[RMDB]
RNA sequence: GGGAACGACUCGAGUAGAGUCGAAAAGAUAUGGAUGUGAAGUCUCCCAGGUAGCGUUGAAAUCGGAAACGAUGGAGCUACUGGGAGUCACACAUCCUAAGUCAAAACAGAUCGUUCGCGAUCUGAAGGAGUUCUAUCUGUUCGCAGAUAGAACUCCAAAAGAAACAACAACAACAAC
Reactivity to DMS in 0.01 (KOAc 150mM, MgCl2 10mM, bicine 150mM(pH8.5), 24C), signal-to-noise 1, nucleotides 027 to 126: g000a010u000a300u010g000g010a000u000g010u010g000a130a150g010u000c010u010c000c000c000a000g000g000u020a000g000c010g050u000u000g000a050a120a020u030c000g000g010a120a100a220c020g010a010u000g010g020a090g010c010u000a040c010u010g000g000g030a000g000u000c010a150c010a000c010a000u000c000c000u000a010a020g030u000c060a090a060a120a130c010a010g000a010u020c000g000u010u000c260g010c040g040a020u000c000u000g000a140a100
Reactivity to 2A3 in 0.01 (KOAc 150mM, MgCl2 10mM, bicine 150mM(pH8.5), 24C), signal-to-noise 2, nucleotides 027 to 126: g060a020u060a060u130g000g020a030u010g040u000g070a250a110g040u040c000u010c000c020c010a040g220g300u050a010g020c060g160u250u070g000a050a030a000u010c000g010g040a030a040a030c020g000a000u010g000g050a000g000c010u020a020c000u030g000g000g000a010g010u010c000a000c000a000c010a000u010c020c010u000a120a000g050u010c030a010a000a120a070c000a020g000a000u000c000g050u180u120c280g030c020g160a000u000c000u020g010a060a050
Description
This 177-nucleotide RNA was probed chemically with DMS and 2A3. DMS adducts were read by reverse transcription with MarathonRT. 2A3 is a SHAPE reagent: it acylates the 2'-hydroxyl of flexible nucleotides of all four kinds. For 2A3 the reverse transcriptase was SuperScript II with manganese.